Record summary
An RNA of 177 nucleotides, treated with DMS and read out base by base. Source: RMDB library RFMREP, as collected in RNAgym.
RNA sequence: GGGAACGACUCGAGUAGAGUCGAAAACUUGGACCAAGCUAAGAUGCAUUGCGGAGCUUGUGGGUACGGUUGGGCUUAGUCGAAGCACAGUCAUGCAAGUGGCUAGUUGUAAUGCUAGCUAACUCAAGAUAAUUCCCCACUUCGGUGGGGAAUUAUCAAAAGAAACAACAACAACAAC
Reactivity to DMS in 0.01 (KOAc 150mM, MgCl2 10mM, bicine 150mM(pH8.5), 24C), signal-to-noise 1, nucleotides 027 to 126: c060u010u000g010g000a170c050c010a060a080g010c020u000a150a130g030a140u020g000c060a110u010u030g010c070g030g000a060g000c030u010u000g070u040g010g000g020u020a150c100g010g000u020u000g010g010g050c010u000u000a070g000u000c100g020a110a040g010c040a040c040a000g010u010c070a080u000g040c120a070a120g010u000g010g000c000u000a010g000u000u000g000u020a080a110u000g010c010u020a000g010c010u030a040a100c020u000c020a120a100
Values cover nucleotides 27 to 126. DMS adducts were read by reverse transcription with MarathonRT. The RNA was probed in 150 mM KOAc, 10 mM MgCl2 and 150 mM bicine (pH 8.5) at 24 C.